[RMDB]
RNA sequence: GGGAACGACUCGAGUAGAGUCGAAAAUGAAAUGCUGCUACUUGCAAUUAAUACGCGGUCUCUAAUACGUUGAAUUGGUUGCGGACCUUUAUUAUAAAGCAACUCGAGCACUGCAAAUUCAGUAAUACAAACCCGAUGAAUUCGUUCAUCGGGUUUGAAAAGAAACAACAACAACAAC
Reactivity to DMS in 0.01 (KOAc 150mM, MgCl2 10mM, bicine 150mM(pH8.5), 24C), signal-to-noise 1, nucleotides 027 to 126: u000g010a020a090a300u010g000c000u010g000c010u000a150c140u000u000g010c000a060a290u000u010a020a040u000a040c230g000c160g000g010u000c030u000c010u020a040a150u000a050c000g030u000u020g040a150a100u000u030g020g030u000u000g020c300g040g010a020c020c000u000u000u000a000u010u000a050u010a000a120a200g020c030a000a000c080u000c240g000a080g020c010a000c210u000g000c000a010a030a190u010u010c000a000g010u000a080a120u030a180
This 177-nucleotide RNA was probed chemically with DMS. High DMS reactivity at an A or C suggests that its Watson-Crick edge is free. Source: RMDB library OK2TRN, as collected in RNAgym. The RNA was probed in 150 mM KOAc, 10 mM MgCl2 and 150 mM bicine (pH 8.5) at 24 C.